[RMDB]
RNA sequence: GGGAACGACUCGAGUAGAGUCGAAAAAAACGAGGCGAUAAGAUGAGCCGGGCCCGGCAGGGUGGUUUGCGACCGAACCGGCGGCACGUCCAGAGGGGAUCUGACAUGAUCUCGUUUGUCCUCGACGUGAGUUCGUUACGUUCGCGUAACGAACUCAAAAAGAAACAACAACAACAAC
Reactivity to 2A3 in 0.01 (KOAc 150mM, MgCl2 10mM, bicine 150mM(pH8.5), 24C), signal-to-noise 1, nucleotides 027 to 126: a000a000a000c010g000a010g020g010c000g030a010u090a090a100g040a110u150g040a000g060c000c000g000g020g000c000c000c000g030g070c170a230g020g000g000u000g010g060u000u010u100g050c060g000a000c000c000g010a010a040c000c000g000g040c000g000g080c010a010c000g030u000c050c000a010g040a010g030g040g050g080a010u000c000u060g040a070c040a150u140g010a060u000c010u000c010g010u020u020u040g040u060c010c030u000c010g000a040c100g110
Reactivity to DMS in 0.01 (KOAc 150mM, MgCl2 10mM, bicine 150mM(pH8.5), 24C), signal-to-noise 2, nucleotides 027 to 126: a040a000a070c020g010a030g000g040c060g000a160u070a110a090g030a110u020g000a270g000c040c000g000g000g000c020c000c000g000g010c300a060g000g000g040u000g010g000u000u000u080g010c190g000a110c020c000g000a030a000c010c000g000g020c000g020g020c000a020c100g000u000c030c070a100g000a100g020g020g000g000a080u000c000u000g020a110c160a080u000g000a060u030c000u020c020g000u000u010u010g020u040c000c010u000c060g010a090c190g000

Chemical mapping of a 177-nucleotide RNA with 2A3 and DMS. Source: RMDB library RFM100, as collected in RNAgym. 2A3 adducts were read by reverse transcription with SuperScript II with manganese.